Description:
Structure probing data (2A3 and DMS) for a 207-nucleotide construct. Conditions: 150 mM KOAc, 10 mM MgCl2 and 150 mM bicine (pH 8.5), 24 C. The DMS profile rests on 3,861 reads.
RNA sequence: GGGAACGACUCGAGUAGAGUCGAAAAGGGCCUUCGGGCCCGCAGAAGGGGUCUCGCUCGAGUUAUCAGGCAAUGAUGUACCUGAAGCCUCCACGGGUAUUGAGCCUGUGCUAAGACAGGCGAGACGGAGGCACCCAACUACUGAUUUCGAUCAGAACAAACAAUCUUUAUUCGUAAAGAUUGUUUGAAAAGAAACAACAACAACAAC
Reactivity to 2A3 in 0.01 (KOAc 150mM, MgCl2 10mM, bicine 150mM(pH8.5), 24C), signal-to-noise 6, nucleotides 027 to 156: g000g000g000c010c030u040u040c110g090g000g010c000c000c020g000c010a040g050a150a070g090g070g020g030u030c010u000c000g010c000u050c030g050a070g020u020u040a060u100c000a000g030g000c050a070a170u280g080a100u220g120u120a060c000c010u020g010a050a020g020c000c000u000c000c010a060c070g150g000g000u170a110u110u190g060a030g010c000c000u010g000u030g020c100u160a100a040g070a050c010a020g000g020c010g010a020g010a000c050g000g000a000g010g000c000a010c000c000c000a030a040c040u240a050c000u020g020a040u130u130u190c190g090a020u070c050a030g030a070a040
Reactivity to DMS in 0.01 (KOAc 150mM, MgCl2 10mM, bicine 150mM(pH8.5), 24C), signal-to-noise 2, nucleotides 027 to 156: g010g030g050c010c000u000u000c180g040g030g010c000c050c040g000c090a070g000a210a120g000g000g010g010u000c010u000c040g010c000u000c020g010a090g010u000u010a130u000c000a040g000g020c040a090a120u010g020a130u020g000u000a030c000c000u000g010a050a190g000c010c000u010c020c030a180c060g000g010g010u000a080u010u000g020a300g000c000c000u010g040u000g010c080u000a110a260g010a080c030a080g050g000c000g000a130g010a120c070g010g030a050g100g070c000a150c010c000c000a080a110c150u010a160c010u010g000a050u000u000u000c220g000a050u000c000a020g000a130a300

2A3 adducts were read by reverse transcription with SuperScript II with manganese.